Structure probing data (2A3 and DMS) for a 177-nucleotide construct. It was measured as part of the RMDB libraries RFM100 and RFMREP. The reactions ran in a buffer of 150 mM KOAc, 10 mM MgCl2 and 150 mM bicine (pH 8.5), at 24 C.
[RMDB]
RNA sequence: GGGAACGACUCGAGUAGAGUCGAAAAUGAUACGGAUGUAUAACGGACUGAUAAUCCUUUCCGUAAAUUGCCUGUAAGUCAGAUAAGGCGAACAGCAAGGAUACCUGCUGUUUUCUGAAUCUUGGAGAUCGCUACUAUGUUUCGACAUAGUAGCGAUAAAAGAAACAACAACAACAAC
Reactivity to 2A3 in 0.01 (KOAc 150mM, MgCl2 10mM, bicine 150mM(pH8.5), 24C), signal-to-noise 9, nucleotides 027 to 126: u110g030a030u020a050c010g000g020a020u040g110u190a130u060a230a110c090g000g010a000c020u060g040a090u120a180a030u030c000c000u010u020u010c000c010g000u010a030a060a050u120u110g070c000c000u030g100u190a110a060g100u110c050a000g000a030u040a060a020g010g000c020g010a000a010c000a000g020c030a090a160g070g050a190u220a300c010c020u010g010c000u000g000u000u000u000u000c010u010g040a050a070u010c030u040u090g070g010a090g010
Reactivity to DMS in 0.01 (KOAc 150mM, MgCl2 10mM, bicine 150mM(pH8.5), 24C), signal-to-noise 7, nucleotides 027 to 126: u000g000a290u010a020c010g000g000a030u000g010u030a100u030a100a070c170g020g000a020c010u000g020a170u030a110a300u000c010c000u000u000u010c000c000g020u000a010a080a060u000u000g010c020c010u020g010u010a080a090g010u000c050a030g000a010u030a020a300g000g000c030g010a010a010c010a010g000c000a020a050g020g010a220u030a100c100c030u000g000c010u010g000u000u010u000u000c000u000g000a250a030u010c010u010u020g020g000a090g010